[RMDB]
About this RNA
Conditions: 150 mM KOAc, 10 mM MgCl2 and 150 mM bicine (pH 8.5), 24 C. The record gives the reactivity of an RNA of 207 nucleotides to 2A3. For 2A3, 511 sequencing reads were counted. 2A3 adducts were read by reverse transcription with SuperScript II with manganese.
RNA sequence: GGGAACGACUCGAGUAGAGUCGAAAAUUAAUACUGCUACAUUUUUAAGACCCUUAGUUAUUUAGCUUUACCGCCCAGGAUGGGGUGCAGCGUUCAUGCAAUAUCCAGGGCACCUAGGUGCAGCCUUCAUGCCUCAUGCCGUUCGCGGCAUGAGGAAUCCGUUCUUAAUGUUCGCAUUAAGAACGGAAAAAGAAACAACAACAACAAC
Reactivity to 2A3 in 0.01 (KOAc 150mM, MgCl2 10mM, bicine 150mM(pH8.5), 24C), signal-to-noise 1, nucleotides 027 to 156: u060u060a090a030u080a120c050u060g040c020u050a050c060a110u090u110u110u110u110a080a000g060a050c000c030c000u050u080a050g040u040u030a120u180u090u110a020g020c010u030u020u020a080c060c000g020c020c000c000a020g020g030a010u050g090g060g010g100u040g000c010a000g000c050g100u130u210c060a100u080g000c010a000a080u030a020u100c010c020a000g000g000g030c020a020c000c020u050a010g070g000u020g010c010a020g050c020c050u070u080c100a010u140g080c000c000u000c000a000u010g000c020c010g020u000u050c280g030c030g020g000c000a000u000g000a000g000g020a000a020